[RMDB]
RNA sequence: GGGAACGACUCGAGUAGAGUCGAAAAUAAUCGUAUAUAUAAUGCGCGCAUCGCGCGAUGCUAUAGCGCUAAUCGGCAUAUUAAUGCGCUAUAAUCGCGGCAUGCAUAUUAAUUACGCGAUUAGCGCUGUCGCGAAUGUAUUCGUACAUUCGCGACAAAAAGAAACAACAACAACAAC
Reactivity to DMS in 0.01 (KOAc 150mM, MgCl2 10mM, bicine 150mM(pH8.5), 24C), signal-to-noise 1, nucleotides 027 to 126: u020a060a070u000c020g000u000a050u010a110u000a070u020a080a090u000g020c090g030c120g020c080a070u000c160g030c080g000c020g000a010u010g030c210u020a090u020a000g010c010g030c010u000a000a000u000c040g020g040c070a090u000a070u010u000a000a050u000g000c010g020c030u000a090u010a060a060u000c100g000c040g010g000c040a150u010g000c010a020u010a030u000u000a010a110u000u000a050c100g000c020g000a000u000u000a010g000c100g020c020
Reactivity to 2A3 in 0.01 (KOAc 150mM, MgCl2 10mM, bicine 150mM(pH8.5), 24C), signal-to-noise 1, nucleotides 027 to 126: u070a000a070u050c060g010u110a050u020a050u030a010u040a300a150u240g020c110g000c010g000c040a040u080c110g020c010g060c040g100a010u040g000c040u050a040u100a150g000c030g020c000u000a000a040u040c050g210g020c060a020u040a070u160u070a050a040u090g030c010g000c000u010a030u100a070a050u050c030g020c040g020g060c060a040u130g000c030a010u000a040u010u040a060a060u050u080a040c160g010c000g050a020u000u010a010g060c060g000c050
The data come from the RNA Mapping Database (RMDB), library OK2TRN.
An RNA of 177 nucleotides, treated with DMS and 2A3 and read out base by base.
DMS adducts were read by reverse transcription with MarathonRT.